[RMDB]
The record gives the reactivity of an RNA of 177 nucleotides to 2A3 and DMS.
Reactivities are given for positions 27 through 126.
The reactions ran in a buffer of 150 mM KOAc, 10 mM MgCl2 and 150 mM bicine (pH 8.5), at 24 C.
For 2A3, 1,111 sequencing reads were counted.
2A3 adducts were read by reverse transcription with SuperScript II with manganese.
RNA sequence: GGGAACGACUCGAGUAGAGUCGAAAAACACUGGACAAGUGUGGCAUCUGCCAGGGGGACGGUAGCAGCUGCACCCACGUGACGGGCAACUAUCGCAAGGGGAAUGCCCACCUUGGUAAGCCACAGCAUGCCUGUGAGGGUUCGCCCUCACAGGCAUAAAAGAAACAACAACAACAAC
Reactivity to 2A3 in 0.01 (KOAc 150mM, MgCl2 10mM, bicine 150mM(pH8.5), 24C), signal-to-noise 1, nucleotides 027 to 126: a000c060a040c060u150g070g050a080c060a170a090g120u000g010u000g040g050c010a040u140c090u090g000c020c000a000g000g030g000g020g040a010c000g010g040u030a000g050c090a000g080c030u090g000c000a160c030c040c050a060c050g000u100g020a060c050g050g000g000c010a020a050c040u010a000u030c040g090c120a080a080g020g010g000g060a170a000u090g000c040c000c000a030c000c000u020u000g000g000u050a050a020g000c000c010a000c000a000g070c010
Reactivity to DMS in 0.01 (KOAc 150mM, MgCl2 10mM, bicine 150mM(pH8.5), 24C), signal-to-noise 1, nucleotides 027 to 126: a020c120a160c050u020g010g000a000c140a100a120g050u000g020u020g000g000c010a050u000c180u000g040c000c000a050g000g010g000g010g000a170c070g050g000u000a090g040c140a100g050c040u020g000c200a140c000c030c080a060c300g000u010g050a080c070g000g000g020c160a010a110c010u020a110u000c000g000c040a290a200g020g050g000g000a090a040u020g020c010c020c030a070c000c010u000u040g000g010u020a040a060g000c000c030a050c010a000g040c150